Chemical mapping of a 177-nucleotide RNA with 2A3. For 2A3, 433 sequencing reads were counted. High 2A3 reactivity points to a flexible backbone, as in loops and unpaired stretches. Source: RMDB library OK1LIB, as collected in RNAgym.
RNA sequence: GGGAACGACUCGAGUAGAGUCGAAAACACUCUAGUUGGGGAAAUGACUAGAACCUGUAUGCCCCUUUUCUUUUGAUCGUUCAUUAAAUGGCUGAUAGCUGGAACACCGAAAGCAAAUGUUAAAAUAGCGACGCUAUGCAUUCGUGCAUAGCGUCGCAAAAGAAACAACAACAACAAC
Reactivity to 2A3 in 0.01 (KOAc 150mM, MgCl2 10mM, bicine 150mM(pH8.5), 24C), signal-to-noise 1, nucleotides 027 to 126: c000a000c000u060c000u000a030g050u040u010g250g090g000g040a020a080a180u190g050a050c000u000a000g000a000a010c000c040u000g070u100a080u190g010c000c000c000c010u000u000u020u040c000u000u000u000u060g030a050u040c080g000u040u000c030a050u060u300a110a090a110u110g010g160c020u030g100a140u100a030g000c000u070g130g000a080a000c000a000c000c000g050a000a000a000g000c000a000a050a010u070g000u090u240a270a090a080a060u100a030